[RMDB]
RNA sequence: GGGAACGACUCGAGUAGAGUCGAAAAUCGUGAGAUGUGGUGCCUCACGCGCUCGAGGCGUCCGUGGUCAGAGAGACCACUGACGCAAAAACUCGAGCGCAAAUAAAUAGCAUUACAUUAAGAAUAACCCAUAUUUACGAUUCGUCGUAAAUAUGGGAAAAGAAACAACAACAACAAC
Reactivity to 2A3 in 0.01 (KOAc 150mM, MgCl2 10mM, bicine 150mM(pH8.5), 24C), signal-to-noise 4, nucleotides 027 to 126: u150c060g020u040g050a060g000a040u180g020u010g020g020u000g010c000c010u050c010a030c080g000c000g000c000u000c000g010a000g050g000c000g000u000c020c000g000u000g000g000u000c040a030g080a050g030a020g000a300c000c000a000c000u000g000a000c000g000c000a110a100a020a010a010c000u000c000g000a000g000c000g000c000a000a000a000u090a000a040a030u170a010g000c000a000u000u010a000c010a020u080u150a120a110g120a100a120u160a090a050
Reactivity to DMS in 0.01 (KOAc 150mM, MgCl2 10mM, bicine 150mM(pH8.5), 24C), signal-to-noise 3, nucleotides 027 to 126: u020c050g100u000g000a020g000a050u040g030u000g000g000u030g000c010c060u000c170a070c080g050c030g000c000u010c010g000a010g030g030c000g010u000c040c130g000u000g000g010u000c010a210g010a110g020a270g040a000c000c000a030c040u000g020a000c000g030c030a050a020a120a070a230c000u000c000g000a010g020c000g030c020a000a070a040u000a030a060a040u020a160g010c000a000u020u000a000c020a030u010u030a120a080g010a090a040u040a120a220

Chemical mapping of a 177-nucleotide RNA with 2A3 and DMS.
The RNA was probed in 150 mM KOAc, 10 mM MgCl2 and 150 mM bicine (pH 8.5) at 24 C.
For 2A3 the reverse transcriptase was SuperScript II with manganese.
Source: RMDB library OK1LIB, as collected in RNAgym.
DMS adducts were read by reverse transcription with MarathonRT.